Chemical mapping of a 177-nucleotide RNA with DMS and 2A3. It was measured as part of the RMDB library M2PK90. The 2A3 profile rests on 2,870 reads. For 2A3 the reverse transcriptase was SuperScript II with manganese.

RNA sequence: GGGAACGACUCGAGUAGAGUCGAAAAAUAAACCUUCCUUCCUUCCAAUAACUCUCUCUCUCUCAAUAAGGAAGGAAGGAGGAAGGAAUAAAGAGAGUGAGAGAGAGAAAAGCGGAAACGCAAAAAACAUGUCACUAAGUUUCGACUUAGUGACAUGAAAAGAAACAACAACAACAAC
Reactivity to DMS in 0.01 (KOAc 150mM, MgCl2 10mM, bicine 150mM(pH8.5), 24C), signal-to-noise 1, nucleotides 027 to 126: a090u010a100a160a080c040c000u010u000c000c000u000u000c020c010u000u020c010c000a300a060u010a180a110c080u010c020u000c000u010c020u000c000u000c000u000c030a050a130u000a070a060g000g010a060a020g000g000a020a010g000g020a000g010g000a060a060g020g030a120a100u020a040a040a190g000a110g010a030g010u000g000a000g010a000g000a000g000a040g000a090a060a040a130g000c010g000g000a010a020a120c000g010c040a000a010a020a050a100a080
Reactivity to 2A3 in 0.01 (KOAc 150mM, MgCl2 10mM, bicine 150mM(pH8.5), 24C), signal-to-noise 2, nucleotides 027 to 126: a010u080a000a070a030c000c010u030u010c000c000u010u040c010c000u000u000c010c000a100a230u180a300a240c010u030c000u010c000u010c000u000c000u000c010u050c000a120a300u140a240a040g020g010a030a020g020g000a000a010g000g010a000g010g000a050a050g020g010a060a010u200a120a090a000g140a010g000a020g010u050g010a020g000a010g010a000g000a000g000a030a110a010a010g000c020g010g000a020a060a000c000g000c000a020a070a000a010a000a090